This 177-nucleotide RNA was probed chemically with 2A3 and DMS. For DMS the reverse transcriptase was MarathonRT. 2A3 adducts were read by reverse transcription with SuperScript II with manganese.

RNA sequence: GGGAACGACUCGAGUAGAGUCGAAAAACUUUGGAUAUCUAACUAUUAUAUCAACACAAUGUUAUAUGAAAACUCGUGUAUGAUGUAUAUCUCCCUAAUUGGGACGUUACGACGUUCUAGAAACGUAAUCAGUUCUUGUUUUCGAACAAGAACUGAUAAAAGAAACAACAACAACAAC
Reactivity to 2A3 in 0.01 (KOAc 150mM, MgCl2 10mM, bicine 150mM(pH8.5), 24C), signal-to-noise 7, nucleotides 027 to 126: a000c070u140u090u130g020g010a030u060a080u130c070u080a040a150c030u020a050u200u090a040u020a010u010c010a000a000c000a000c010a070a110u150g040u060u020a130u030a080u300g200a160a180a000a000c020u030c060g000u000g000u030a300u080g000a000u000g030u020a030u010a030u030c050u030c010c000c000u060a180a190u100u080g020g000g010a010c010g000u020u050a090c250g040a010c010g030u000u000c000u000a040g130a030a100a020c060g050u080a010
Reactivity to DMS in 0.01 (KOAc 150mM, MgCl2 10mM, bicine 150mM(pH8.5), 24C), signal-to-noise 4, nucleotides 027 to 126: a050c110u000u010u020g000g020a060u020a040u030c050u010a040a060c100u020a110u020u010a010u010a010u010c010a020a010c000a010c000a020a030u050g040u000u000a140u020a150u030g000a080a070a030a020c020u000c200g000u000g000u010a090u010g000a000u000g010u000a020u000a070u010c070u000c000c010c000u040a070a120u030u000g020g000g000a020c170g020u000u000a090c200g030a010c000g010u000u000c010u000a090g000a050a030a040c160g030u030a070